Overview
An RNA of 177 nucleotides, treated with DMS and 2A3 and read out base by base. It was measured as part of the RMDB library OK2TST. For DMS, 954 sequencing reads were counted. DMS adducts were read by reverse transcription with MarathonRT.
[RMDB]
RNA sequence: GGGAACGACUCGAGUAGAGUCGAAAAUCAUUUCGAACUUGUCGCCCUCGCGCGAUGUCUUGGCCAUGGCCAAGAUUGAAGUCAAACUGUCCGAUAUUCCCGAGGGCAAGAAUAUGACCUUCAAAUGCGACUGUCAACUGUUCGCAGUUGACAGUCGAAAAGAAACAACAACAACAAC
Reactivity to DMS in 0.01 (KOAc 150mM, MgCl2 10mM, bicine 150mM(pH8.5), 24C), signal-to-noise 2, nucleotides 027 to 126: u000c140a050u000u010u000c060g010a090a060c130u000u010g020u000c030g010c000c030c150u000c140g000c210g080c040g010a050u010g000u000c000u000u000g020g000c000c060a150u000g080g010c000c000a000a020g000a040u000u000g010a060a090g000u000c060a050a140a260c180u000g020u000c000c010g000a150u000a190u000u000c020c000c000g000a170g000g000g000c030a040a020g000a060a130u010a100u000g000a100c060c090u000u000c010a060a080a100u000g000
Reactivity to 2A3 in 0.01 (KOAc 150mM, MgCl2 10mM, bicine 150mM(pH8.5), 24C), signal-to-noise 2, nucleotides 027 to 126: u070c030a020u040u090u160c090g040a070a060c090u070u180g020u060c050g020c020c040c020u080c040g110c020g020c020g050a010u080g020u000c010u000u020g010g010c010c080a190u240g150g000c000c000a000a010g000a020u000u070g040a020a010g030u050c010a000a020a070c080u050g030u030c010c030g030a020u000a130u160u040c000c000c000g010a010g000g000g030c040a030a010g020a060a020u240a130u080g070a050c050c060u100u010c040a050a070a090u130g000